[RMDB]
RNA sequence: GGGAACGACUCGAGUAGAGUCGAAAAUGUGAAACAGAUAAAUGGAAAUACGAAAAUCCAUGCAAGAAAAUGUGCACAGUUUCUGAUUACAUCUCUGAACUAUAUAAUAAACCGCUAUACGAAGUGAAUUCCACCAUGACACUAAGUUGCAACGGCGGAAUAAACAAACAUUCGUGUUUGUUUAUUCAAAAGAAACAACAACAACAAC
Reactivity to DMS in 0.01 (KOAc 150mM, MgCl2 10mM, bicine 150mM(pH8.5), 24C), signal-to-noise 3, nucleotides 027 to 156: u000g020u000g000a150a100a190c030a110g030a140u010a080a110a060u000g000g010a040a050a180u000a250c090g000a110a110a160a270u000c030c010a040u010g010c070a090a150g010a130a080a070a090u000g000u000g020c040a080c070a090g010u000u000u010c000u000g010a120u000u000a050c050a100u010c020u000c040u020g010a060a130c040u000a100u000a090u010a070a100u020a030a060a080c020c020g010c050u000a100u010a070c040g010a150a040g030u000g020a060a170u000u000c040c040a040c100c070a050u000g000a270c020a030c050u000a040a300g000u000u000g020c000a050a090c010g010g010c090g030
Reactivity to 2A3 in 0.01 (KOAc 150mM, MgCl2 10mM, bicine 150mM(pH8.5), 24C), signal-to-noise 5, nucleotides 027 to 156: u060g030u010g020a050a090a020c040a020g070a080u110a160a140a030u040g020g060a050a080a040u180a140c080g040a110a080a010a020u000c000c000a020u020g020c030a050a030g060a120a190a050a040u090g060u030g020c040a020c010a040g000u020u070u040c030u030g030a060u040u100a030c010a100u050c040u000c020u090g020a090a030c040u060a060u080a030u060a300a120u100a140a120a030c020c020g000c000u040a040u020a110c020g030a050a020g010u010g020a040a060u110u040c030c000a050c030c020a060u120g030a010c010a000c020u030a090a050g010u020u050g040c030a070a020c070g030g010c010g000

The record gives the reactivity of an RNA of 207 nucleotides to DMS and 2A3. DMS adducts were read by reverse transcription with MarathonRT. For DMS, 5,358 sequencing reads were counted.